Description: An RNA of 177 nucleotides, treated with 2A3 and DMS and read out base by base. Reactivities are given for positions 27 through 126. For DMS, 7,039 sequencing reads were counted. For DMS the reverse transcriptase was MarathonRT. 2A3 adducts were read by reverse transcription with SuperScript II with manganese.
[RMDB]
RNA sequence: GGGAACGACUCGAGUAGAGUCGAAAAUAAGUUUGUCCAAAUCCCUGCUCAGUGUGUCCGUGACCCUGUGGGAUUUUGUUUGUCAAAUACCCCCUGUAAUGUCUGUCAAUAUUGGAUUGGAUAUGGGACUGAUUAUUGAGUUCGCUCAAUAAUCAGUAAAAGAAACAACAACAACAAC
Reactivity to 2A3 in 0.01 (KOAc 150mM, MgCl2 10mM, bicine 150mM(pH8.5), 24C), signal-to-noise 4, nucleotides 027 to 126: u180a060a030g040u010u020u020g010u000c010c000a010a000a010u000c010c000c010u020g060c060u030c050a030g030u000g010u040g010u130c050c160g200u150g040a020c000c010c010u020g020u070g020g000g000a010u000u030u060u050g030u030u130u120g030u010c000a000a020a020u100a090c000c000c020c010c000u020g050u080a050a060u090g010u040c010u010g020u030c020a030a050u060a180u300u120g070g010a030u040u160g020g000a020u020a030u060g000g000g040
Reactivity to DMS in 0.01 (KOAc 150mM, MgCl2 10mM, bicine 150mM(pH8.5), 24C), signal-to-noise 5, nucleotides 027 to 126: u010a090a130g000u000u010u010g010u000c020c030a020a040a060u000c010c000c020u010g020c200u000c020a040g010u010g020u000g010u000c030c230g010u010g010a040c020c020c000u000g020u000g010g010g000a050u000u000u010u000g010u000u000u000g010u010c010a010a020a030u000a250c020c010c000c030c040u000g010u000a060a070u000g010u000c010u000g010u000c030a060a110u010a170u010u000g020g010a060u000u010g000g000a040u000a060u000g010g000g000